Chemical mapping of a 177-nucleotide RNA with 2A3 and DMS.
For DMS, 1,601 sequencing reads were counted.
The data come from the RNA Mapping Database (RMDB), library M2PK50.
The reactions ran in a buffer of 150 mM KOAc, 10 mM MgCl2 and 150 mM bicine (pH 8.5), at 24 C.

[RMDB]
RNA sequence: GGGAACGACUCGAGUAGAGUCGAAAAGGUACAACGUUCGCGUUGUACCAAAUAAGGCAACCUUCGUGGUGACGAGAAUUAAUGAGUGCUCGCCCUCAUAAAAAACAAUCCCCUUCGGGGGAUUGAACAAGAGAGUCUUGUUCGCAAGACUCUCUUGAAAAGAAACAACAACAACAAC
Reactivity to 2A3 in 0.01 (KOAc 150mM, MgCl2 10mM, bicine 150mM(pH8.5), 24C), signal-to-noise 2, nucleotides 027 to 126: g000g000u000a000c010a010a000c000g020u020u010c120g000c010g210u020u000g020u000a000c000c000a000a000a000u080a030a020g040g000c020a040a020c020c000u060u100c120g100u140g090g050u050g000a070c020g040a040g000a080a040u220u210a060a100u220g060a010g090u090g070c020u000c040g020c000c010c000u000c060a060u210a080a110a010a020a000a010c000a000a000u000c010c020c020c030u030u000c070g000g000g020g000g020a000u020u000g000a000a030
Reactivity to DMS in 0.01 (KOAc 150mM, MgCl2 10mM, bicine 150mM(pH8.5), 24C), signal-to-noise 2, nucleotides 027 to 126: g010g030u010a010c010a000a020c000g040u010u010c280g050c010g000u000u000g010u000a010c010c010a010a050a030u010a110a090g020g020c120a030a060c020c040u000u040c140g030u010g010g010u010g010a040c030g000a060g000a080a080u010u010a050a070u000g010a060g010u000g000c010u000c050g020c020c000c010u000c030a100u050a000a030a050a110a070a120c010a010a000u000c000c000c000c000u000u020c160g020g010g010g010g000a000u000u000g000a040a130